[RMDB]
Chemical mapping of a 177-nucleotide RNA with 2A3 and DMS. 2A3 adducts were read by reverse transcription with SuperScript II with manganese. The DMS profile rests on 5,286 reads.

RNA sequence: GGGAACGACUCGAGUAGAGUCGAAAACGAGAUGAGUUCGCUCAUCUCGAAAGAACCGCGGGCGUGACUCGGUCAGAGCAUGACAGGCGCUGCGGUCACGUAAAAGUGGUGUGUUCGCACACCACAAGAAGUGACAUAACUUCGGUUAUGUCACUUCAAAAGAAACAACAACAACAAC
Reactivity to 2A3 in 0.01 (KOAc 150mM, MgCl2 10mM, bicine 150mM(pH8.5), 24C), signal-to-noise 1, nucleotides 027 to 126: c010g000a000g000a010u000g000a010g050u060u120c210g070c000u000c010a000u000c000u000c000g000a010a020a010g020a040a010c010c000g000c070g060g100g010c010g020u050g130a170c060u100c230g100g020u060c050a020g020a040g110c150a120u120g070a080c020a050g110g000c010g000c020u010g000c000g010g000u010c030a030c070g150u190a040a050a040a110g000u000g000g000u000g000u010g000u000u050c140g050c020a000c000a000c000c050a000c000a000a010
Reactivity to DMS in 0.01 (KOAc 150mM, MgCl2 10mM, bicine 150mM(pH8.5), 24C), signal-to-noise 3, nucleotides 027 to 126: c010g010a010g000a000u000g010a000g010u000u010c230g030c000u000c000a000u000c000u000c000g000a020a050a090g020a140a080c010c000g000c040g000g000g000c000g000u000g000a110c030u010c090g020g020u000c020a010g000a090g010c110a080u000g010a070c130a120g000g000c010g000c000u000g010c010g000g000u000c030a020c130g000u010a060a040a120a110g000u000g000g020u000g010u000g020u000u010c190g010c000a000c000a000c000c000a000c000a040a040
For 2A3, 9,165 sequencing reads were counted.
Conditions: 150 mM KOAc, 10 mM MgCl2 and 150 mM bicine (pH 8.5), 24 C.